[RMDB]
RNA sequence: GGGAACGACUCGAGUAGAGUCGAAAAACGCCAGCAUUAACGCAAACAGUGUCUAGAACAGAAACGCAACCUCGUGACAACGACUCUGCUGCACAAAGGUUCGCAAGAACGAUAGCUGGCAAUAGCCGUUAGUCAGAGAGUUCGCUCUCUGACUAACAAAAGAAACAACAACAACAAC
Reactivity to DMS in 0.01 (KOAc 150mM, MgCl2 10mM, bicine 150mM(pH8.5), 24C), signal-to-noise 4, nucleotides 027 to 126: a080c220g000c000c000a030g010c010a100u010u010a070a110c240g020c050a030a070a120c040a070g030u000g030u000c030u000a130g000a140a060c120a080g010a060a110a080c110g010c240a020a110c110c100u000c100g010u000g010a150c060a130a110c200g000a030c050u000c020u000g030c030u000g000c030a110c160a040a090a090g010g000u010u000c030g010c210a060a110g030a040a000c000g000a100u010a090g020c010u000g000g000c010a070a040u000a090g000c130c040
Reactivity to 2A3 in 0.01 (KOAc 150mM, MgCl2 10mM, bicine 150mM(pH8.5), 24C), signal-to-noise 4, nucleotides 027 to 126: a000c070g000c020c000a000g010c010a030u090u070a110a030c080g000c010a060a070a060c010a040g030u010g010u020c020u050a060g030a150a030c050a050g100a070a120a010c060g030c100a040a070c000c040u060c070g060u040g080a090c050a080a030c070g030a020c020u020c020u050g020c020u030g000c020a020c070a080a110a010g110g000u000u000c000g000c030a040a040g010a040a000c030g030a030u080a060g000c020u000g000g000c020a000a030u020a010g030c020c040